[RMDB]
The record gives the reactivity of an RNA of 177 nucleotides to DMS and 2A3. Reactivities are given for positions 27 through 126. It was measured as part of the RMDB libraries RFM100 and RFMREP.
RNA sequence: GGGAACGACUCGAGUAGAGUCGAAAACACCCUGUUUCGAGCCAAAAAAGCAGGAGGGCGAAAGUAGGUUAAGAGACAUCGCAAGACCUUCAAAACGAACUAUGCGAGUAGUUCACAGCUAAGUCUGUCCGGAUAAAUAAUUCGUUAUUUAUCCGGAAAAAGAAACAACAACAACAAC
Reactivity to DMS in 0.01 (KOAc 150mM, MgCl2 10mM, bicine 150mM(pH8.5), 24C), signal-to-noise 7, nucleotides 027 to 126: c160a180c020c010c010u010g000u010u000u000c030g010a140g010c070c070a010a060a070a090a090a090g010c040a080g010g020a080g010g010g010c030g000a050a070a080g010u000a040g000g020u000u020a090a150g000a110g010a090c100a080u000c070g010c060a070a110g000a090c040c020u000u010c090a060a050a090a130c170g000a020a020c010u010a000u000g000c200g000a130g010u000a030g010u010u000c000a140c080a070g000c070u010a060a100g000u010c020u000g010
Reactivity to 2A3 in 0.01 (KOAc 150mM, MgCl2 10mM, bicine 150mM(pH8.5), 24C), signal-to-noise 8, nucleotides 027 to 126: c080a080c000c000c000u000g010u000u030u020c040g030a040g040c020c030a080a130a010a050a030a000g050c030a050g010g050a030g010g030g000c020g040a080a050a030g050u120a030g010g080u070u050a100a010g050a010g010a050c030a040u060c030g010c030a050a050g050a120c010c000u020u050c040a060a050a060a090c080g000a010a010c000u020a020u060g030c030g030a030g030u010a000g000u010u010c040a030c010a040g030c030u160a130a000g070u040c010u010g050